[RMDB]
RNA sequence: GGGAACGACUCGAGUAGAGUCGAAAACACAAACCUUGCUUGAACGUAUUUUGUUAGAAGAUCACUCUGCGGAUACCUAUAUUCAAGCUAUUCAAAGCACAUUGCCUGAAUUAGUUGGUCGUGAUCAGAUCACCGUAAUAUUCGUAUUACGGUGAUCAAAAGAAACAACAACAACAAC
Reactivity to DMS in 0.01 (KOAc 150mM, MgCl2 10mM, bicine 150mM(pH8.5), 24C), signal-to-noise 6, nucleotides 027 to 126: c090a090c190a090a090a090c080c070u000u000g000c020u000u000g000a030a060c180g000u000a010u000u000u000u010g030u000u010a020g020a040a120g000a030u000c020a020c010u000c000u010g020c020g000g000a040u000a000c040c300u010a160u010a140u000u000c020a010a010g000c010u000a040u000u000c040a030a100a190g010c040a120c190a090u010u010g000c000c040u000g000a030a030u000u000a080g010u010u000g010g010u000c130g000u000g010a020u010c030a170
Reactivity to 2A3 in 0.01 (KOAc 150mM, MgCl2 10mM, bicine 150mM(pH8.5), 24C), signal-to-noise 3, nucleotides 027 to 126: c080a000c040a030a100a040c030c040u040u160g000c000u000u050g020a050a010c030g030u030a040u030u080u080u250g090u130u200a050g010a080a000g000a020u020c010a020c030u020c000u010g020c010g020g000a010u010a010c010c040u130a070u020a040u300u060c010a010a010g000c020u020a030u020u050c050a070a090a020g050c000a060c040a260u100u300g010c000c010u030g060a070a050u100u050a140g090u080u150g050g000u040c060g000u000g020a000u010c020a010